This 177-nucleotide RNA was probed chemically with DMS and 2A3. For DMS, 3,868 sequencing reads were counted. It was measured as part of the RMDB library OK2TRN. Conditions: 150 mM KOAc, 10 mM MgCl2 and 150 mM bicine (pH 8.5), 24 C. Values cover nucleotides 27 to 126.

[RMDB]
RNA sequence: GGGAACGACUCGAGUAGAGUCGAAAAGAUUGGUCAGCGAAAUCGUCACGCCGGCAAAGUCUUCAGUGGUCAGCUUGCCGUCGCGGGCCCGGCGUACGAUGUCUUCGUAGGCCGUGACGAACUGCGCAAUAGGAGCAUUCUUCGGAAUGCUCCUAUUAAAAGAAACAACAACAACAAC
Reactivity to DMS in 0.01 (KOAc 150mM, MgCl2 10mM, bicine 150mM(pH8.5), 24C), signal-to-noise 4, nucleotides 027 to 126: g010a150u020u010g010g030u000c020a170g020c040g000a070a090a080u000c030g000u000c080a030c020g010c020c020g010g000c160a040a060a120g010u000c030u010u010c140a090g020u010g010g020u000c120a130g000c080u000u010g010c030c110g000u000c090g020c070g000g010g020c040c040c010g000g000c000g010u000a020c010g010a020u010g010u010c190u010u000c010g020u000a080g020g020c020c040g030u000g010a100c090g000a070a090c130u000g010c070g020c150
Reactivity to 2A3 in 0.01 (KOAc 150mM, MgCl2 10mM, bicine 150mM(pH8.5), 24C), signal-to-noise 2, nucleotides 027 to 126: g020a050u110u230g020g040u060c030a020g000c010g060a050a030a060u010c010g020u000c030a000c000g020c000c000g020g010c100a140a090a060g000u030c000u080u110c150a180g060u130g190g020u060c050a040g060c060u070u090g030c050c030g120u080c080g000c000g000g040g010c020c020c000g000g000c000g010u000a010c000g000a000u020g070u020c100u040u000c040g010u000a070g020g010c000c000g000u020g040a030c030g030a080a050c040u120g030c050g000c070